[RMDB]
Conditions: 150 mM KOAc, 10 mM MgCl2 and 150 mM bicine (pH 8.5), 24 C. The record gives the reactivity of an RNA of 177 nucleotides to DMS and 2A3. 2A3 adducts were read by reverse transcription with SuperScript II with manganese. Values cover nucleotides 27 to 126.

RNA sequence: GGGAACGACUCGAGUAGAGUCGAAAAGAUAUGGAUCCACGUGAGCUAGCUGUAUAUCGGAAACGAUAUAGUAGCUUGGACCUCAUGGAUCCUAAGUCAAAACAACUCCUACUUCGGUAGGAGUUGACAACAGAGUGAUCUUCGGAUCACUCUGUUGAAAAGAAACAACAACAACAAC
Reactivity to DMS in 0.01 (KOAc 150mM, MgCl2 10mM, bicine 150mM(pH8.5), 24C), signal-to-noise 4, nucleotides 027 to 126: g010a050u000a270u010g010g000a010u000c000c000a040c160g030u000g020a050g000c050u000a020g020c010u000g020u000a000u000a000u000c000g010g000a070a040a100c000g000a010u000a010u000a000g020u030a030g030c010u000u010g050g010a090c300c000u010c000a070u000g010g000a010u000c000c000u000a010a060g000u020c010a110a050a150a300c000a000a000c000u000c000c000u000a010c000u000u020c220g010g010u000a000g010g010a020g000u000u000g010a130
Reactivity to 2A3 in 0.01 (KOAc 150mM, MgCl2 10mM, bicine 150mM(pH8.5), 24C), signal-to-noise 2, nucleotides 027 to 126: g000a000u030a010u090g000g000a000u000c000c000a030c170g090u110g040a090g040c150u220a010g000c010u040g020u110a020u000a010u010c010g020g000a050a030a020c000g010a000u000a000u000a010g180u160a010g000c000u060u290g270g070a110c010c000u000c010a040u030g010g000a010u000c000c000u000a040a010g030u000c030a020a060a090a200c000a030a000c000u000c000c000u000a000c000u040u080c300g160g000u000a000g010g000a000g000u000u010g000a010